[RMDB]
RNA sequence: GGGAACGACUCGAGUAGAGUCGAAAAAAUUAGGAUAGGAGAGCAUCAGGCCAUGCACAUUUGUGCUUGAACUAAUGCCUGAGUUGAUGAGCACUGACCGUCCAACACUGUUAAUCACUGCAGUUGUUAUCAACCAGCCUUAAUCAAUGUAGAGUUAGAUUUAGUAGACAUUCGUGUCUACUAAAUCAAAAGAAACAACAACAACAAC
Reactivity to 2A3 in 0.01 (KOAc 150mM, MgCl2 10mM, bicine 150mM(pH8.5), 24C), signal-to-noise 5, nucleotides 027 to 156: a000a000u200u130a070g000g010a040u050a080g030g000a030g020a000g020c030a030u050c000a000g010g000c040c000a020u050g040c020a020c020a070u160u210u300g000u020g000c000u030u030g030a070a050c050u070a110a050u110g000c000c020u000g000a030g020u010u050g040a100u070g030a010g020c020a000c090u050g040a100c000c030g040u050c030c010a020a000c030a010c040u020g030u100u090a100a110u190c040a050c100u120g010c020a040g000u110u040g030u070u050a110u120c030a010a020c020c030a010g060c000c020u050u160a100a060u120c100a060a070u200g050u120a060g030a040g130u100u090a000
Reactivity to DMS in 0.01 (KOAc 150mM, MgCl2 10mM, bicine 150mM(pH8.5), 24C), signal-to-noise 2, nucleotides 027 to 156: a070a120u020u010a000g000g000a130u000a130g030g020a210g000a060g030c020a020u000c030a010g000g010c010c000a030u020g020c030a020c000a300u000u010u010g060u010g020c030u000u000g010a030a030c020u000a070a020u000g020c010c000u010g010a170g030u000u010g020a080u000g000a140g030c180a020c030u000g010a110c080c040g000u020c040c030a040a070c000a050c080u030g000u000u000a050a140u020c100a170c110u010g000c040a050g020u000u010g020u010u000a120u000c020a050a080c030c010a070g000c020c040u000u000a060a120u010c030a060a090u010g010u010a080g000a120g010u000u010a120
Description: This 207-nucleotide RNA was probed chemically with 2A3 and DMS. The RNA was probed in 150 mM KOAc, 10 mM MgCl2 and 150 mM bicine (pH 8.5) at 24 C. It was measured as part of the RMDB library OK3TST. Values cover nucleotides 27 to 156.